[RMDB]
RNA sequence: GGGAACGACUCGAGUAGAGUCGAAAAUCUCCUCGUGGUGCUGGCCUGCCCUCCGUGAGCCAGAGAAACAGGACUGGUUUGGGGGUCUCCCAUCCGAACAGCCACGGGAGACCACGGUUUCCAGUGCAUAUUAGCAGUUUUUCGAAACUGCUAAUAUAAAAGAAACAACAACAACAAC
Reactivity to DMS in 0.01 (KOAc 150mM, MgCl2 10mM, bicine 150mM(pH8.5), 24C), signal-to-noise 9, nucleotides 027 to 126: u020c030u000c000c020u020c070g030u010g000g020u010g010c030u010g010g000c050c030u010g010c080c050c030u010c050c120g010u020g010a120g010c020c020a040g000a100g010a110a140a110c150a110g000g010a090c040u000g000g000u000u010u000g020g020g000g000g010u000c030u000c020c000c010a150u020c090c060g010a080a100c150a170g000c060c050a080c110g000g010g000a010g000a020c020c010a060c100g000g010u000u000u000c000c010a050g010u020g010c170
Reactivity to 2A3 in 0.01 (KOAc 150mM, MgCl2 10mM, bicine 150mM(pH8.5), 24C), signal-to-noise 9, nucleotides 027 to 126: u020c010u010c000c010u060c040g030u040g020g020u080g030c060u030g030g030c020c020u040g020c010c010c010u040c010c020g090u090g050a030g020c010c010a010g020a010g030a050a160a020c080a070g010g120a050c010u040g020g060u070u070u090g080g010g000g000g020u000c010u010c000c020c000a050u080c060c040g040a110a060c050a060g040c020c010a020c010g000g000g000a000g000a000c010c000a040c030g040g010u000u030u000c010c010a020g040u040g120c030